[RMDB]
RNA sequence: GGGAACGACUCGAGUAGAGUCGAAAAGUUUAAGAGCAAAGUCGUUUUUCUAAGCCAUAGGUUCACUCACACAGCACCAAACGAUCAGCAGCAACAGUACACGCAAAUAAGAGGCAUAGAUAUUCCAGGUAGUGCAAUAACUCACAAAACCAUAUUACCGUUUUAUCAUAUUCGUAUGAUAAAACGGAAAAGAAACAACAACAACAAC
Reactivity to DMS in 0.01 (KOAc 150mM, MgCl2 10mM, bicine 150mM(pH8.5), 24C), signal-to-noise 3, nucleotides 027 to 156: g020u000u000u000a060a100g020a100g000c030a090a080a150g020u010c040g010u000u000u000u000u000c030u030a070a140g050c040c020a100u000a070g020g040u000u000c010a110c050u000c030a090c080a110c020a100g000c010a060c040c040a040a060a090c060g020a070u000c030a130g000c020a050g000c040a040a060c020a040g000u010a050c040a060c050g030c060a030a060a080u020a060a120g000a080g000g000c040a090u010a050g000a120u000a140u000u000c020c030a110g030g020u000a060g010u010g020c020a050a090u000a040a040c020u000c040a080c080a040a010a060a060c020c020a050u000a070u010u000a180
Reactivity to 2A3 in 0.01 (KOAc 150mM, MgCl2 10mM, bicine 150mM(pH8.5), 24C), signal-to-noise 7, nucleotides 027 to 156: g040u080u120u150a100a040g030a020g020c050a080a050a050g030u060c060g020u030u050u020u010u060c050u110a070a050g020c020c030a070u090a060g030g020u050u050c030a020c050u050c020a020c010a010c010a030g030c020a030c040c000a080a060a030c040g030a060u050c020a010g020c010a000g000c010a020a040c000a070g040u060a030c050a010c090g050c050a030a070a030u100a100a050g030a020g030g000c020a010u050a040g060a040u080a090u100u080c020c000a010g040g020u040a020g050u050g040c000a020a060u040a090a030c010u030c040a040c020a040a120a070a060c050c040a040u120a090u240u180a060